Chemical mapping of a 177-nucleotide RNA with 2A3. The 2A3 profile rests on 1,012 reads. Source: RMDB library RFM100, as collected in RNAgym. The reactions ran in a buffer of 150 mM KOAc, 10 mM MgCl2 and 150 mM bicine (pH 8.5), at 24 C. Values cover nucleotides 27 to 126.
RNA sequence: GGGAACGACUCGAGUAGAGUCGAAAAACGAGCUUACGAGCUCGAGCGCGCUGGGUCCAGUGGUUCUUAACAGUUCAACAGUUCUGUAGCGCAAUUGUGAAAUGUUUAGGACCACUAGACCCGGCAAGUGGUCGAGGCAUUUCGAUGCCUCGACCACAAAAGAAACAACAACAACAAC
Reactivity to 2A3 in 0.01 (KOAc 150mM, MgCl2 10mM, bicine 150mM(pH8.5), 24C), signal-to-noise 2, nucleotides 027 to 126: a000c010g010a000g020c020u090u070a050c230g070a010g000c000u000c000g020a060g030c190g020c050g000c000u010g000g010g030u000c010c000a000g000u000g010g000u010u000c000u010u030a000a000c010a040g000u010u000c040a080a040c020a070g020u070u030c020u100g300u300a100g110c080g010c190a000a000u000u000g000u000g010a000a050a040u020g010u050u010u010a010g000g000a000c000c000a000c000u000a000g000a000c010c000c000g010g000c000a000a010